[RMDB]
Structure probing data (DMS) for a 177-nucleotide construct. For DMS, 2,447 sequencing reads were counted. Source: RMDB library TTRINS, as collected in RNAgym. For DMS the reverse transcriptase was MarathonRT.
RNA sequence: GGGAACGACUCGAGUAGAGUCGAAAAGAUAUGGAUGUGCUAGGGAGCUGACGAUACUACUAGGAGAAUAUCGGAAACGAUAUUCUCCUAGUAGUAUCGCAGCGAGGAUCUAGUACAUCCUAAGUCAGCAAAUUAAUUACUUCGGUAAUUAAUUUGCAAAAGAAACAACAACAACAAC
Reactivity to DMS in 0.01 (KOAc 150mM, MgCl2 10mM, bicine 150mM(pH8.5), 24C), signal-to-noise 2, nucleotides 027 to 126: g020a050u000a300u010g010g010a000u010g010u000g020c000u000a020g000g000g000a020g020c010u020g000a190c000g000a010u000a010c010u000a010c000u010a020g000g000a020g010a040a010u000a000u000c000g000g010a140a080a290c000g000a010u000a000u010u000c010u000c000c000u000a000g010u000a000g010u000a000u000c000g030c000a010g000c000g000a040g000g010a030u010c000u000a010g020u000a000c010a000u000c000c000u000a020a090g020u000c100a160